[RMDB]
RNA sequence: GGGAACGACUCGAGUAGAGUCGAAAAGGCUUUAUGUCCUUCUACGUGAAAGCGGUGGUUGAAGCCCUGAAACGUUACCCGGAAGUGAAUGCUUCUAUCGACGGCGAUGACGUGGUUUACCACAACACGGAUCAUUAGCAUUCGUGCUAAUGAUCCGAAAAGAAACAACAACAACAAC
Reactivity to 2A3 in 0.01 (KOAc 150mM, MgCl2 10mM, bicine 150mM(pH8.5), 24C), signal-to-noise 2, nucleotides 027 to 126: g010g000c050u140u150u100a140u250g110u170c000c010u060u040c020u060a040c030g030u020g100a040a020a010g030c060g000g010u020g030g100u010u030g070a010a000g000c030c010c000u020g030a040a060a030c030g060u020u060a020c000c020c000g020g050a000a000g060u070g150a170a040u260g040c000u040u020c030u040a090u140c030g100a030c050g050g030c020g040a070u020g010a020c050g020u040g060g010u000u020u080a040c010c010a060c050a020a010c050a020
Reactivity to DMS in 0.01 (KOAc 150mM, MgCl2 10mM, bicine 150mM(pH8.5), 24C), signal-to-noise 2, nucleotides 027 to 126: g020g030c010u000u000u010a040u000g000u020c000c010u010u000c030u000a100c020g030u010g000a100a120a120g000c040g000g060u000g000g000u010u000g000a060a090g030c020c050c020u010g000a100a280a050c090g000u000u000a130c090c060c050g000g040a090a040g010u010g000a110a070u010g010c010u000u000c020u010a090u010c090g000a090c010g000g020c020g000a150u000g000a070c100g000u000g000g010u010u000u000a120c000c000a060c110a080a050c130a150